[RMDB]
RNA sequence: GGGAACGACUCGAGUAGAGUCGAAAAACCGGGGGGUGAUCCACCAGGAGAAGGAGCGGAGAACCCACCUCCAGAGGACCCCUUCAGCGAACAGAAGGGCUCCUCCUCCUCGGGAGUAGGCCCGUAGUAAGUGAAUACUUCGGUAUUCACAAAAGAAACAACAACAACAAC
Reactivity to 2A3 in 0.01 (KOAc 150mM, MgCl2 10mM, bicine 150mM(pH8.5), 24C), signal-to-noise 9, nucleotides 027 to 129: a000c020c010g000g000g000g000g000g010u040g030a040u010c010c010a050c030c040a110g030g070a040g030a100a060g040g010a010g060c090g020g040a090g010a100a040c020c010c000a040c010c000u010c000c020a020g000a010g020g020a010c000c000c000c000u000u000c020a080g040c050g100a060a040c030a120g010a010a000g000g000g000c010u010c000c000u000c010c000u010c000c000u010c000g030g010g000a010g040u050a020g020g050c010c020c040g010u020a040g040u040a210a030
Reactivity to DMS in 0.01 (KOAc 150mM, MgCl2 10mM, bicine 150mM(pH8.5), 24C), signal-to-noise 8, nucleotides 027 to 129: a110c000c030g010g010g000g000g010g010u020g020a150u000c040c030a130c120c090a020g020g020a060g010a050a070g010g010a010g050c110g000g000a120g000a120a140c030c020c010a080c080c010u030c040c050a060g030a000g040g020a060c220c010c000c010u000u000c020a080g030c000g040a010a010c020a130g000a020a020g020g020g030c160u000c020c020u020c020c030u020c000c070u000c060g000g000g000a030g000u020a050g020g020c040c020c000g030u030a030g000u000a060a060